Source information
An RNA of 207 nucleotides, treated with DMS and 2A3 and read out base by base. The DMS profile rests on 8,732 reads.
RNA sequence: GGGAACGACUCGAGUAGAGUCGAAAAAUCCUUCCGACUUCGCUCAAGGGUCGGGUCUGGGUCUCAAAUUAUUGAGCUACGGUUAAUGUUGCCACCUGAGGCAUUAACAAGAGACUAGUAGGUUAGCUGCGUUGUGUUAGCCUUGCUGGCUGGCGCGCUAGAAAACGUAGUUCGCUACGUUUUCUAGAAAAGAAACAACAACAACAAC
Reactivity to DMS in 0.01 (KOAc 150mM, MgCl2 10mM, bicine 150mM(pH8.5), 24C), signal-to-noise 3, nucleotides 027 to 156: a110u000c040c030u010u020c010c000g000a020c010u000u000c060g010c020u000c020a050a040g000g030g000u000c010g010g000g020u010c090u010g020g000g020u000c050u000c060a110a120a190u010u000a050u000u000g010a050g000c010u000a300c000g020g000u000u000a020a020u000g000u010u010g010c010c040a040c020c020u000g010a290g000g010c000a020u010u000a010a010c010a030a060g020a280g010a120c130u000a090g030u000a050g020g020u000u010a130g010c010u010g010c040g000u000u000g040u000g020u000u000a050g000c000c010u000u000g010c160u000g020g040c010u000g020g010c010g010c040g020
Reactivity to 2A3 in 0.01 (KOAc 150mM, MgCl2 10mM, bicine 150mM(pH8.5), 24C), signal-to-noise 3, nucleotides 027 to 156: a000u050c000c000u060u000c000c000g000a000c010u030u030c110g000c000u000c000a010a000g000g010g000u000c010g000g000g010u040c170u150g020g000g040u010c020u000c040a150a190a150u300u250a160u070u060g000a000g000c020u000a000c000g000g010u000u000a010a000u010g010u020u020g020c020c030a010c010c010u000g010a020g010g010c000a000u000u000a010a000c010a010a010g000a010g070a050c110u080a060g100u030a000g020g030u080u090a030g030c130u140g050c060g040u090u050g090u050g010u100u040a010g000c000c040u100u260g080c180u160g010g010c000u010g000g000c020g010c000g000